Chemical mapping of a 177-nucleotide RNA with 2A3 and DMS. It was measured as part of the RMDB library OK1LIB.
[RMDB]
RNA sequence: GGGAACGACUCGAGUAGAGUCGAAAAAGUCCUAUUGGUGCCUCAGCAUGAGGGGUUUCUCAAGGAAAUGAUGGAUAGAUCUGACAUAAGCCUUAUGGUAAGAUCAGAUGUGCUGAACAUCAGAGCACACAAGGAUUAAGUUCGCUUAAUCCUUGUGAAAAGAAACAACAACAACAAC
Reactivity to 2A3 in 0.01 (KOAc 150mM, MgCl2 10mM, bicine 150mM(pH8.5), 24C), signal-to-noise 9, nucleotides 027 to 126: a000g110u020c020c000u050a120u040u100g030g010u040g010c020c010u030c040a090g050c070a190u140g100a120g040g030g030g010u030u180u020c070u010c030a070a110g100g020a080a080a080u130g040a060u080g060g050a030u060a130g060a020u010c000u010g000a010c010a040u140a130a180g130c020c070u200u180a110u190g020g000u060a040a020g010a110u010c000a020g020a050u080g020u050g040c030u040g030a070a020c000a020u020c020a020g020a030g050c030a010
Reactivity to DMS in 0.01 (KOAc 150mM, MgCl2 10mM, bicine 150mM(pH8.5), 24C), signal-to-noise 8, nucleotides 027 to 126: a130g010u010c000c000u000a090u040u010g010g020u000g000c060c020u000c000a130g020c130a090u030g010a070g000g010g000g010u000u000u000c020u000c120a210a100g010g010a040a050a100u010g000a050u000g000g000a150u020a040g000a040u010c000u000g010a060c050a060u030a070a210g000c060c040u010u040a100u030g020g030u010a070a100g000a120u010c000a030g020a040u010g010u020g010c030u000g000a070a140c040a020u010c010a040g000a100g000c130a250
The RNA was probed in 150 mM KOAc, 10 mM MgCl2 and 150 mM bicine (pH 8.5) at 24 C.